[RMDB]
RNA sequence: GGGAACGACUCGAGUAGAGUCGAAAAGAUAUGGACUCAUGGAGCUCCUGGUCGGAAACGACCACGGAGCGAUGAAAUGACAUGUCCUAAGUCAAAAUCAUCCCACGCCUUCGGGCGUGGGAUGAAAGUAAAUUAUAACGUUCGCGUUAUAAUUUACAAAAGAAACAACAACAACAAC
Reactivity to 2A3 in 0.01 (KOAc 150mM, MgCl2 10mM, bicine 150mM(pH8.5), 24C), signal-to-noise 1, nucleotides 027 to 126: g000a000u010a010u080g000g010a000c010u010c050a010u000g040g000a010g010c010u000c010c000u000g000g000u010c000g030g000a040a020a010c000g010a020c000c020a030c160g000g000a010g030c010g010a040u010g010a000a000a020u030g030a050c110a280u300g000u000c000c000u020a010a010g000u010c020a030a070a010a300u040c000a000u000c000c010c000a000c040g000c010c000u130u190c300g200g000g020c050g000u000g030g020g000a010u010g010a000a010a000
Reactivity to DMS in 0.01 (KOAc 150mM, MgCl2 10mM, bicine 150mM(pH8.5), 24C), signal-to-noise 2, nucleotides 027 to 126: g000a000u000a030u010g000g000a020c000u000c010a000u000g000g000a030g010c000u000c000c000u010g000g020u000c000g000g010a010a020a030c000g010a000c000c010a010c300g020g000a000g040c000g020a050u010g000a070a180a020u000g000a070c230a080u020g010u000c000c000u000a020a110g000u000c010a080a040a160a160u000c010a010u000c000c000c000a020c000g020c010c020u000u010c240g050g000g030c000g060u000g010g020g000a000u000g000a000a010a140